[RMDB]
The record gives the reactivity of an RNA of 207 nucleotides to DMS and 2A3.
High DMS reactivity at an A or C suggests that its Watson-Crick edge is free.
Source: RMDB library M2RFPK, as collected in RNAgym.
The RNA was probed in 150 mM KOAc, 10 mM MgCl2 and 150 mM bicine (pH 8.5) at 24 C.
For 2A3, 3,628 sequencing reads were counted.
RNA sequence: GGGAACGACUCGAGUAGAGUCGAAAAGGAGGACGAAGCAUAUUUCUGUUUCUGGAGGAUUAUUUAUAAUCUGCCGGAAAGUCUAGCAGGUGGCUGGGAUAUGUUCAGUCUGGUAGAAUUAAGCACGAAAACGUGUCCUUGUUCGCAAGGACACGAACAGAAGAAUCUAGUUCGCUAGAUUCUUCUGAAAAGAAACAACAACAACAAC
Reactivity to DMS in 0.01 (KOAc 150mM, MgCl2 10mM, bicine 150mM(pH8.5), 24C), signal-to-noise 3, nucleotides 027 to 156: g000g020a170g000g020a030c030g010a150a180g010c020a080u010a060u010u000u010c050u000g010u010u000u000c000u010g020g010a050g010g010a030u000u010a040u000u000u000a070u000a060a010u000c000u000g000c000c010g010g000a030a030a060g010u000c040u000a080g020c050a120g040g000u000g020g010c030u000g000g000g000a070u010a020u010g010u000u000c020a220g020u000c010u010g010g010u010a060g000a130a110u010u000a030a130g000c040a100c060g010a070a040a110a150c020g030u010g010u000c000c010u000u000g030u000u000c300g020c030a030a030g020g000a010c000a000c000g010a030a110
Reactivity to 2A3 in 0.01 (KOAc 150mM, MgCl2 10mM, bicine 150mM(pH8.5), 24C), signal-to-noise 4, nucleotides 027 to 156: g050g030a030g010g010a020c020g020a040a000g040c030a010u020a030u090u110u050c050u080g110u030u050u000c000u020g010g020a040g000g010a000u010u000a010u020u180u020a060u030a030a010u010c000u040g050c020c010g000g030a020a020a010g030u050c100u130a040g020c060a030g050g200u110g080g000c020u040g000g010g000a000u020a000u060g070u110u050c050a010g020u010c010u020g000g030u050a030g090a090a070u150u110a110a020g060c060a020c140g080a030a040a080a050c000g000u000g000u010c000c000u010u010g020u030u060c180g000c120a000a000g000g000a000c000a000c000g000a000a000